An RNA of 207 nucleotides, treated with 2A3 and DMS and read out base by base.
The RNA was probed in 150 mM KOAc, 10 mM MgCl2 and 150 mM bicine (pH 8.5) at 24 C.
For 2A3, 2,868 sequencing reads were counted.
For DMS the reverse transcriptase was MarathonRT.
The DMS profile rests on 1,806 reads.
For 2A3 the reverse transcriptase was SuperScript II with manganese.
RNA sequence: GGGAACGACUCGAGUAGAGUCGAAAAAUAUGGUUGCUGAACAACAUCAUCAUAAUCGUACGCAACCAUACUACCGUAGUACCAAAAACAACACCGCCACCAUAACAUUCGACGAUCUGGCCGACAUGUCAAAGUUGACUCUGACGCGCAUGCGGGCGCGGCAACAUACUUUCGAGUAUGUUGCCGCAAAAGAAACAACAACAACAAC
Reactivity to 2A3 in 0.01 (KOAc 150mM, MgCl2 10mM, bicine 150mM(pH8.5), 24C), signal-to-noise 5, nucleotides 027 to 156: a000u010a000u000g000g010u000u010g020c020u060g120a090a030c060a030a090c030a160u180c030a030u030c010a070u170a230a080u250c110g040u040a030c050g000c000a000a000c000c000a000u000a000c010u050a050c000c040g060u080a020g020u050a090c020c060a050a060a050a030a020c070a060a000c020a040c070c010g040c010c020a040c000c010a050u050a170a090c030a100u060u100c050g040a030c020g070a140u020c040u060g030g040c000c020g040a050c020a070u130g060u080c040a060a060a060g030u070u060g050a050c050u030c060u110g020a050c040g000c000g020c050a030u080g000c000g000g020g000c030
Reactivity to DMS in 0.01 (KOAc 150mM, MgCl2 10mM, bicine 150mM(pH8.5), 24C), signal-to-noise 1, nucleotides 027 to 156: a070u000a000u000g000g030u010u000g000c020u040g030a100a220c040a100a040c040a110u000c120a140u010c100a180u010a070a040u020c100g000u000a150c200g000c000a000a040c020c000a010u000a000c020u000a120c070c020g000u020a080g020u020a150c050c080a010a070a040a070a070c030a080a050c020a070c000c030g000c040c010a080c070c030a040u000a060a040c090a130u000u010c090g020a200c020g040a080u000c070u000g010g010c020c030g010a070c050a050u000g010u000c040a030a050a100g010u010u000g000a080c040u000c040u010g010a030c000g000c040g000c040a090u000g060c000g010g010g010c040